[RMDB]
RNA sequence: GGGAACGACUCGAGUAGAGUCGAAAACAUGUGAAGUGCAUGGUAAUGGUAGUAUGAUAGAGGAUAUUGAUUAUGUACCCCUAAAAUCUGCAGUCUGUAUUACAGCUUGUAAUUUAGGGGGCGCUGUUCUAGGGAUAAUCUUCGGAUUAUCCCUAGAAAAAGAAACAACAACAACAAC
Reactivity to 2A3 in 0.01 (KOAc 150mM, MgCl2 10mM, bicine 150mM(pH8.5), 24C), signal-to-noise 1, nucleotides 027 to 126: c010a000u090g030u030g170a120a050g020u000g030c040a030u020g020g010u110a100a040u070g010g020u020a020g020u020a060u130g030a080u040a070g050a020g000g020a020u050a050u100u100g090a140u150u100a060u180g070u300a300c000c000c000c010u010a000a000a000a080u000c030u010g000c000a000g040u070c010u000g030u010a130u070u160a040c000a000g010c010u040u000g000u000a020a010u000u010u000a000g010g000g030g020g000c030g020c030u050g010u020
Reactivity to DMS in 0.01 (KOAc 150mM, MgCl2 10mM, bicine 150mM(pH8.5), 24C), signal-to-noise 1, nucleotides 027 to 126: c100a050u000g000u000g020a100a100g030u000g000c040a040u010g000g010u020a030a100u000g000g000u000a030g010u000a030u000g020a100u000a010g010a100g030g010a090u000a090u000u000g000a100u000u000a040u000g010u010a130c000c020c000c000u000a030a020a030a040u000c170u010g000c010a000g000u000c000u010g000u020a180u010u000a060c020a020g000c050u000u000g000u000a030a050u000u000u000a050g010g000g020g010g020c050g000c150u020g000u000